[RMDB]
This 207-nucleotide RNA was probed chemically with 2A3. Values cover nucleotides 27 to 156. Values are in units of 0.01, from 0 to 300, in steps of 10.
RNA sequence: GGGAACGACUCGAGUAGAGUCGAAAAGGGUGAGACCUAGGAACCGUAGGGGUAUUCUCAAAUGAAGCUUUUGCAGUGACGCCCAUGUAAGUGGGAUAUAACAACAGAACUCGUAUGAGUAGCCUAAUAAAUCGGACCUUCUUCGGAAGGUCCGAAACGAACUGUGUAGGUUCGCCUACACAGUUCGAAAAGAAACAACAACAACAAC
Reactivity to 2A3 in 0.01 (KOAc 150mM, MgCl2 10mM, bicine 150mM(pH8.5), 24C), signal-to-noise 2, nucleotides 027 to 156: g070g000g000u120g040a070g030a050c040c010u050a090g120g000a080a110c040c030g020u040a030g000g000g000g000u050a090u130u070c030u040c020a030a050a030u200g020a080a010g030c040u070u060u090u030g000c050a030g020u000g030a040c080g010c030c010c000a010u060g050u120a100a130g020u020g000g000g000a010u040a000u010a090a020c030a010a010c010a010g040a020a060c020u000c050g030u090a070u140g020a020g040u050a020g020c020c020u090a090a040u180a130a140a040u050c000g000g000a000c000c000u000u000c000u000u010c110g070g000a000a000g000g000u000c000c000g000a000a000a000